Chemical mapping of a 177-nucleotide RNA with DMS and 2A3. The RNA was probed in 150 mM KOAc, 10 mM MgCl2 and 150 mM bicine (pH 8.5) at 24 C. For 2A3, 1,763 sequencing reads were counted. It was measured as part of the RMDB library M2PK50.

RNA sequence: GGGAACGACUCGAGUAGAGUCGAAAACCUUGGUCCUUCGGGACCAAGGAAACCCGAAGACAUACAGUCUGUGGGCGGCGAGACAAUCCACAAGAGUCGCUAAAAGCGUCUGGUUCGCCAGACGCAACGGGACAUAUAACUUCGGUUAUAUGUCCCGAAAAGAAACAACAACAACAAC
Reactivity to DMS in 0.01 (KOAc 150mM, MgCl2 10mM, bicine 150mM(pH8.5), 24C), signal-to-noise 2, nucleotides 027 to 126: c000c000u010u000g000g000u010c000c000u000u000c100g040g000g000a000c000c000a010a000g010g040a010a060a080c010c000c000g000a150a080g000a030c030a130u010a130c200a060g000u000c000u000g040u000g000g020g020c170g030g000c060g030a090g000a050c020a060a150u000c090c090a010c120a060a110g000a190g030u010c010g050c070u000a060a090a060a150g040c010g020u010c010u000g000g000u010u030c210g050c000c000a000g000a010c000g000c030a000a020
Reactivity to 2A3 in 0.01 (KOAc 150mM, MgCl2 10mM, bicine 150mM(pH8.5), 24C), signal-to-noise 2, nucleotides 027 to 126: c010c000u000u000g000g010u000c010c000u010u050c200g090g010g020a000c000c000a000a000g020g000a020a030a000c010c000c000g050a060a010g050a020c020a030u300a070c070a100g010u020c000u020g060u190g050g010g000c040g020g030c010g010a050g010a070c060a060a120u070c030c020a050c000a060a030g030a010g100u030c010g040c000u030a020a090a000a100g000c000g030u000c000u010g000g090u030u050c260g040c060c000a000g010a010c000g000c010a010a020